[RMDB]
RNA sequence: GGGAACGACUCGAGUAGAGUCGAAAAGGUAGUGAAGGGCCGCCACGAAGAGAUCGACAUGGGCACCGCGAAGGCGAAGGAAGACACUAAAUUCAAGAUCACGACCAACGCCAGCUACUACAAGCUGACCGUGAACGGUCGCGACCUCAUCGAGCUCGCAGGGAAGAGAAUUCGUUCUCUUCCCUGCAAAAGAAACAACAACAACAAC
Reactivity to 2A3 in 0.01 (KOAc 150mM, MgCl2 10mM, bicine 150mM(pH8.5), 24C), signal-to-noise 1, nucleotides 027 to 156: g060g020u090a060g000u030g110a080a020g010g020g040c020c030g050c070c070a020c080g070a030a110g070a010g000a150u120c050g020a030c070a060u090g000g020g000c030a020c070c000g030c000g030a070a090g070g000c000g020a010a000g020g020a020a020g050a000c030a040c170u200a100a080a170u160u060c070a070a040g010a070u040c030a000c060g030a000c000c000a060a000c020g000c000c010a000g000c000u080a070c000u080a030c060a110a000g000c080u040g010a010c020c020g000u010g210a140a150c090g000g000u000c010g000c010g030a080c000c000u030c000a040u060c010g000a030g050c030u050c060
This 207-nucleotide RNA was probed chemically with 2A3. 2A3 adducts were read by reverse transcription with SuperScript II with manganese. The RNA was probed in 150 mM KOAc, 10 mM MgCl2 and 150 mM bicine (pH 8.5) at 24 C. Values cover nucleotides 27 to 156.